[RMDB]
This 177-nucleotide RNA was probed chemically with DMS and 2A3. It was measured as part of the RMDB library OK2TRN.
RNA sequence: GGGAACGACUCGAGUAGAGUCGAAAAAUCGUCUGAUCUGUGAUCAUACUGCGCGAGUACGAUCGAUCUAUGCUCAGACGGCCUGCGGCGCGAUCUGAUCGGCCGCGCGUACCGAUCUGGCGCGGCCGCCAUGGGACCAGUUCGCUGGUCCCAUGGCAAAAGAAACAACAACAACAAC
Reactivity to DMS in 0.01 (KOAc 150mM, MgCl2 10mM, bicine 150mM(pH8.5), 24C), signal-to-noise 6, nucleotides 027 to 126: a050u010c010g010u000c000u000g000a010u000c010u000g010u010g000a020u000c010a070u000a070c080u000g020c070g010c190g010a300g020u000a020c080g000a050u000c180g010a070u010c090u010a070u000g000c080u000c000a010g000a040c010g000g000c020c000u000g010c050g010g000c010g000c030g000a060u010c070u010g010a050u000c040g010g000c080c040g010c040g000c040g010u010a160c040c030g010a060u000c050u000g010g010c000g010c010g010g020c020c020
Reactivity to 2A3 in 0.01 (KOAc 150mM, MgCl2 10mM, bicine 150mM(pH8.5), 24C), signal-to-noise 5, nucleotides 027 to 126: a000u040c010g000u000c000u010g010a010u000c000u030g150u090g070a020u030c020a020u040a110c020u080g050c060g010c060g120a040g020u050a090c090g020a050u060c060g020a030u040c050u140a060u110g000c000u000c000a000g000a040c000g000g000c010c000u030g010c040g040g010c030g000c010g050a100u040c060u120g020a050u060c020g020g020c010c010g000c000g000c010g030u050a050c010c040g020a080u030c060u120g050g000c000g000c000g060g150c020c030
For DMS, 11,972 sequencing reads were counted.